[RMDB]
RNA sequence: GGGAACGACUCGAGUAGAGUCGAAAACCAAACACCCGACUUCGGAAGAAGAGGGUGCAGGUUCAGAGACUAAAUGGGGGUGGGUUUGGAAAACGGACCUUCUAUUUCCCAAGCCUAAGAUAUAGUCCAAUCCCCUAGGGAAACUUAGGGGCUACUAGCUUACAUUUUUGUUCGCAAAAAUGUAAGCAAAAGAAACAACAACAACAAC
Reactivity to 2A3 in 0.01 (KOAc 150mM, MgCl2 10mM, bicine 150mM(pH8.5), 24C), signal-to-noise 1, nucleotides 027 to 156: c000c020a010a090a000c020a010c000c040c000g300a300c110u010u000c000g060g190a170a070g020a010a000g000a050g000g000g010u000g000c040a040g040g040u060u160c100a030g050a010g000a100c020u110a140a110a150u170g050g000g000g000g000u040g010g000g000u040u020u010g030g010a020a030a010a070c070g040g050a080c020c000u090u020c030u100a120u050u060u070c020c010c000a010a000g000c000c000u080a100a050g040a040u060a020u050a220g020u010c020c000a010a070u000c000c000c040c010u010a000g000g000g020a000a080a000c010u020u010a010g010g000g000g000c000u020a020c040u010a030
Source: RMDB library ARCHII, as collected in RNAgym. The record gives the reactivity of an RNA of 207 nucleotides to 2A3.